Chemical mapping of a 177-nucleotide RNA with DMS and 2A3. 2A3 adducts were read by reverse transcription with SuperScript II with manganese. Values are in units of 0.01, from 0 to 300, in steps of 10.

RNA sequence: GGGAACGACUCGAGUAGAGUCGAAAAAGCCACGCAUACGUGCGUGGCAAGCUGUGAAGACGCUAGACUUAGACUGACUCAUGAUGAAGGGCCAAAGCUCAGAGCACGACUGGCUACGGCCAGUCGAACAUCUAUAUAAAUUCGUUUAUAUAGAUGUAAAAGAAACAACAACAACAAC
Reactivity to DMS in 0.01 (KOAc 150mM, MgCl2 10mM, bicine 150mM(pH8.5), 24C), signal-to-noise 4, nucleotides 027 to 126: a080g000c010c000a010c000g020c000a080u010a080c150g020u020g010c000g020u010g010g010c000a000a010g010c040u020g010u030g010a100a090g000a140c110g010c040u010a080g000a100c060u020u020a060g010a090c050u010g020a120c070u000c050a080u010g030a090u050g010a110a070g000g020g020c030c070a060a040a130g000c030u000c060a050g000a120g020c100a120c020g000a030c000u000g000g000c020u000a070c190g020g000c000c030a000g000u000c010g010a070
Reactivity to 2A3 in 0.01 (KOAc 150mM, MgCl2 10mM, bicine 150mM(pH8.5), 24C), signal-to-noise 7, nucleotides 027 to 126: a010g000c000c000a000c010g000c000a010u020a070c260g110u030g000c000g010u000g000g000c000a000a000g000c000u100g020u060g100a090a040g040a030c040g020c050u040a030g020a090c040u070u080a030g030a080c030u070g020a020c020u010c060a060u090g070a070u080g040a140a100g040g010g000c040c030a090a080a040g000c010u030c070a030g010a030g100c040a020c100g000a000c000u000g000g000c010u030a020c080g060g000c000c000a000g000u000c000g000a000